[RMDB]
This 207-nucleotide RNA was probed chemically with 2A3.
Source: RMDB library RNAMAK, as collected in RNAgym.
Conditions: 150 mM KOAc, 10 mM MgCl2 and 150 mM bicine (pH 8.5), 24 C.
RNA sequence: GGGAACGACUCGAGUAGAGUCGAAAAGAAUUGGCUUCGGCCAAUUCAAAAAACCUUUGUGUAUACGCGAGAGACUUGGACCGGAUACAACCCAUUGGGUUGUGAUCCGCUAGUCUCUCAUACACUCUGGUAAAAAACAACCUGUUCGCAGGUUGAAACAGUUAAUUGUCUUCGGACAAUUAACUGUAAAAGAAACAACAACAACAAC
Reactivity to 2A3 in 0.01 (KOAc 150mM, MgCl2 10mM, bicine 150mM(pH8.5), 24C), signal-to-noise 2, nucleotides 027 to 156: g010a000a020u020u010g000g010c040u040u110c280g060g000c000c000a000a000u000u000c000a030a030a000a000a010a030c040c000u050u020u000g040u000g010u010a020u010a110c270g030c170g160a000g010a000g000a020c020u120u160g000g080a110c100c150g000g000a000u000a000c000a010a020c000c020c070a300u150u300g010g000g010u020u020g000u040g060a030u010c000c000g020c000u000a010g000u000c000u000c000u020c000a000u000a000c000a000c000u000c010u010g000g060u080a160a090a000a010a040a030c000a000a000c010c000u020g020u040u040c300g040c080a000g000g000u000u000g010a110a040